Source: RMDB library OK3TST, as collected in RNAgym. This 207-nucleotide RNA was probed chemically with 2A3. The reactions ran in a buffer of 150 mM KOAc, 10 mM MgCl2 and 150 mM bicine (pH 8.5), at 24 C.
RNA sequence: GGGAACGACUCGAGUAGAGUCGAAAAGCAUUAAGAGAGUACUCUUAUUCCCACAACGUUGGUGACAACGUUGAUUUUCCGGUGGCCACCCGCCCGGGCCACCGUUACUCCACUCCACUCCUUCGGGACUGGUUUGGAGGAACAUUUGAGGGCUAAACUCGUCAUGAUCAUUCGUGAUCAUGACGAGAAAAGAAACAACAACAACAAC
Reactivity to 2A3 in 0.01 (KOAc 150mM, MgCl2 10mM, bicine 150mM(pH8.5), 24C), signal-to-noise 1, nucleotides 027 to 156: g090c070a070u050u110a060a000g010a000g000a060g190u140a100c000u020c010u010u010a010u020u000c000c000c020a000c000a000a000c000g000u000u000g000g060u120g040a060c000a000a000c000g030u000u000g040a050u070u070u100u110c040c020g000g020u000g000g050c010c000a080c100c100c050g010c000c000c000g000g000g000c000c000a000c000c000g000u000u040a000c000u000c010c000a000c000u020c000c000a000c000u020c000c000u000u100c180g060g000g010a000c000u010g000g000u000u000u020g000g000a010g030g000a030a010c040a040u100u100u160g110a060g010g000g010c000u000a010a040a000